RNA sequence: GGGAACGACUCGAGUAGAGUCGAAAAUCUCAAGUGAGGCUUAACGUAUGCGUGAACCAAAGAAGUUCUCCUUAGAGUGUGUGUUGUUUACCCAACACACUGUCCCUAUGGGGGGCCAACAUAGGUCUAUUGGUCCAUCAUUCGUGAUGGACCAAUAAAAAGAAACAACAACAACAAC
Reactivity to DMS in 0.01 (KOAc 150mM, MgCl2 10mM, bicine 150mM(pH8.5), 24C), signal-to-noise 4, nucleotides 027 to 126: u000c010u000c010a080a080g010u020g020a090g020g000c020u000u010a050a120c110g010u010a050u020g020c060g040u010g000a080a100c060c070a090a110a130g020a120a130g000u000u020c010u000c000c000u000u000a040g010a050g010u020g010u010g000u010g010u000u000g010u010u010u050a130c260c290c010a000a010c000a000c000a000c000u000g000u040c100c030c010u000a050u000g000g000g000g000g000g000c010c070a030a110c150a070u010a090g000g010u000c070
Reactivity to 2A3 in 0.01 (KOAc 150mM, MgCl2 10mM, bicine 150mM(pH8.5), 24C), signal-to-noise 5, nucleotides 027 to 126: u020c000u010c020a010a010g120u090g130a050g030g020c010u060u100a100a000c090g060u140a070u190g100c070g060u090g060a050a040c030c000a080a020a040g070a050a000g040u180u050c000u020c000c010u020u040a050g000a020g030u110g000u000g000u000g000u050u000g040u030u140u160a080c030c020c010a000a000c000a010c000a000c000u000g100u060c000c000c000u010a100u080g010g000g000g000g010g000c000c000a060a080c050a140u180a080g000g030u010c030